[RMDB]
RNA sequence: GGGAACGACUCGAGUAGAGUCGAAAAGUGCUGGCGAAGGGAACGGAUCACCCCCUUCCCUUUUUUUGUACCCAUUUUGUGUAGAAAAUUUGUAUUUACUUUGGGAGUGUAAUUUGUUCCUCAUGGAUAAUGUGACCCUGAGCGGAGCUGGAUCAUAGGAUUAGGUAAAUUUCGAUUUACCUAAUCCAAAAGAAACAACAACAACAAC
Reactivity to 2A3 in 0.01 (KOAc 150mM, MgCl2 10mM, bicine 150mM(pH8.5), 24C), signal-to-noise 2, nucleotides 027 to 156: g050u010g030c050u050g050g000c060g000a010a000g010g010g000a010a000c110g060g020a060u150c070a170c020c020c000c000c040u000u030c000c030c120u000u010u000u010u000u040u030g010u010a010c010c000c010a010u050u110u080u160g010u050g010u040a050g060a030a080a050a060u070u070u110g030u030a150u050u150u070a080c050u060u030u060g010g000g000a020g000u090g010u080a060a130u090u100u080g030u050u030c030c010u060c060a100u170g000g000a060u090a240a030u140g040u060g060a040c000c000c010u020g010a020g020c030g040g010a000g020c040u060g000g020a040u080c000a010u120a140
Reactivity to DMS in 0.01 (KOAc 150mM, MgCl2 10mM, bicine 150mM(pH8.5), 24C), signal-to-noise 2, nucleotides 027 to 156: g030u010g040c030u000g010g030c070g030a100a050g010g010g000a050a060c040g020g010a180u020c090a150c050c060c020c000c020u000u000c000c010c000u000u010u000u000u000u020u010g020u000a090c010c000c020a230u000u010u000u000g020u000g020u000a070g000a070a050a050a100u000u000u010g010u000a070u000u010u000a030c040u000u000u010g010g010g020a100g000u010g000u010a060a080u000u000u000g010u010u000c030c010u000c060a120u000g010g010a080u000a020a090u010g020u000g000a100c040c000c010u000g010a080g040c040g020g010a150g010c050u000g010g000a180u010c020a050u000a240